Record summary:
Source: RMDB library 15KLIB, as collected in RNAgym. This 170-nucleotide RNA was probed chemically with 2A3 and DMS. For DMS, 59,442 sequencing reads were counted.
RNA sequence: GGGAACGACUCGAGUAGAGUCGAAAACUGGUUCAGGAGUAGCUAUAGUUGAUAGCUACUAUUCUUAUUUGAUGCCUGUGCUCUCAAUGACCGAUUGUCUGGCCGCUGAGACACAUAGGGAUUGUGACAACUUGUCUGUUCGCAGACAAGAAAAGAAACAACAACAACAAC
Reactivity to 2A3 in 0.01 (KOAc 150mM, MgCl2 10mM, bicine 150mM(pH8.5), 24C), signal-to-noise 9, nucleotides 027 to 129: c030u060g080g080u140u120c050a020g030g020a020g050u000a000g000c000u010a010u040a080g180u080u160g170a020u010a000g000c000u000a000c000u000a030u040u060c020u010u140a190u120u130u150g110a070u090g090c000c000u020g000u010g030c050u000c000u000c000a010a030u040g020a070c020c030g130a180u100u260g140u150c150u130g020g000c010c000g010c040u000g000a010g000a010c010a000c010a050u120a060g050g010g020a030u040u090g100u070g050a030c020a080a050
Reactivity to DMS in 0.01 (KOAc 150mM, MgCl2 10mM, bicine 150mM(pH8.5), 24C), signal-to-noise 9, nucleotides 027 to 129: c000u000g010g020u050u030c150a100g010g010a030g030u020a050g000c010u020a030u020a130g000u050u050g050a220u020a010g010c000u000a010c000u020a030u000u000c060u020u020a140u030u020u020g000a010u000g010c050c010u000g010u000g010c300u000c000u000c000a020a030u010g020a070c030c010g030a140u040u030g010u080c090u070g020g030c030c000g000c050u010g000a020g030a020c170a030c000a050u000a070g000g000g000a050u010u010g020u020g000a100c180a110a150